[RMDB]
RNA sequence: GGGAACGACUCGAGUAGAGUCGAAAACGCUGGGUGGAAACGUGGGAAUCAUAUUGGGUUGCUAAAGUAUCUGAAGCGCGCACGGAUACUGAUGUAUAACCAGGUGAUUCCCACUAUCCACCUGUGCUGAAGCGCGCACGGCAACCGAAAGGUGCGAGCUGCUAUAAGACUUCGGUCUUAUAGCAGCAAAAGAAACAACAACAACAAC
Reactivity to DMS in 0.01 (KOAc 150mM, MgCl2 10mM, bicine 150mM(pH8.5), 24C), signal-to-noise 1, nucleotides 027 to 156: c020g050c000u000g000g050g040u000g010g000a030a070a200c300g000u000g020g000g000a020a080u000c000a060u010a100u000u000g000g050g010u000u010g030c050u000a060a190a020g000u000a010u010c000u030g000a010a090g020c030g050c010g030c040a300c030g000g030a010u000a010c000u010g010a110u000g010u000a020u000a030a040c000c000a100g040g040u000g010a100u000u000c010c000c000a020c000u000a050u010c010c000a040c000c030u000g000u000g010c040u000g030a100a010g040c040g030c010g000c000a300c040g030g010c000a110a130c000c030g000a100a170a150g030g020u000g020c020g000a160
Reactivity to 2A3 in 0.01 (KOAc 150mM, MgCl2 10mM, bicine 150mM(pH8.5), 24C), signal-to-noise 4, nucleotides 027 to 156: c020g000c010u020g000g020g010u020g010g030a050a070a070c110g000u000g000g000g020a000a010u010c020a000u090a300u240u250g160g020g020u070u100g050c050u110a160a040a000g000u000a000u000c000u010g070a190a050g010c000g000c000g010c010a010c010g000g000a000u010a010c010u010g030a040u150g100u100a160u070a240a120c120c160a040g020g020u010g000a000u000u000c000c000c010a000c000u000a000u000c000c010a000c000c000u000g000u010g000c020u020g020a100a020g000c000g000c000g000c020a010c010g000g000c010a030a040c000c010g010a100a060a000g030g000u000g000c000g000a040